[RMDB]
Conditions: 150 mM KOAc, 10 mM MgCl2 and 150 mM bicine (pH 8.5), 24 C. An RNA of 207 nucleotides, treated with 2A3 and DMS and read out base by base. DMS adducts were read by reverse transcription with MarathonRT. The 2A3 profile rests on 1,466 reads. For DMS, 2,649 sequencing reads were counted. The data come from the RNA Mapping Database (RMDB), library OK3TST.

RNA sequence: GGGAACGACUCGAGUAGAGUCGAAAAGAGUCUUUGCCACUUCAAUUUGCGCACAUCAUAGCAGAUGCAGAACUAUGGGUUAGGGUCCAAAACAUAGGGAAGAUGGCUCAAAGGCAGAUGGUGGAAAGCCUUUUACCUGAUGGCGACAUUGAGAGUCAAGUCCAUUUUACUUCGGUAAAAUGGACUUAAAAGAAACAACAACAACAAC
Reactivity to 2A3 in 0.01 (KOAc 150mM, MgCl2 10mM, bicine 150mM(pH8.5), 24C), signal-to-noise 3, nucleotides 027 to 156: g020a020g030u030c000u060u030u050g110c010c000a020c000u020u040c030a040a180u020u060u070g050c050g010c010a060c030a220u060c020a030u090a080g030c030a050g070a150u130g010c000a000g030a090a030c030u030a040u040g040g060g000u020u090a090g020g000g070u050c040c010a000a060a060a040c010a020u090a020g020g000g060a010a060g050a100u030g020g000c010u020c080a010a030a040g030g000c050a030g010a100u120g030g020u000g000g010a000a120a030g020c000c000u030u020u040u030a070c000c010u060g050a050u090g000g040c030g020a020c010a060u110u210g030a090g010a020g060u000c040
Reactivity to DMS in 0.01 (KOAc 150mM, MgCl2 10mM, bicine 150mM(pH8.5), 24C), signal-to-noise 2, nucleotides 027 to 156: g000a080g010u000c000u000u000u010g020c000c000a100c060u010u010c070a060a100u000u000u000g000c030g000c050a100c070a080u000c030a090u000a120g000c010a120g000a080u000g050c020a080g020a150a030c040u000a020u010g000g040g010u000u000a090g040g040g020u010c020c010a040a050a080a080c090a090u000a090g060g000g010a090a150g010a100u000g000g000c000u000c090a050a040a140g030g040c000a080g020a060u010g020g000u000g020g010a130a050a120g020c030c000u000u000u000u000a060c000c000u000g010a080u000g020g020c010g000a090c040a050u000u000g000a070g010a180g000u010c060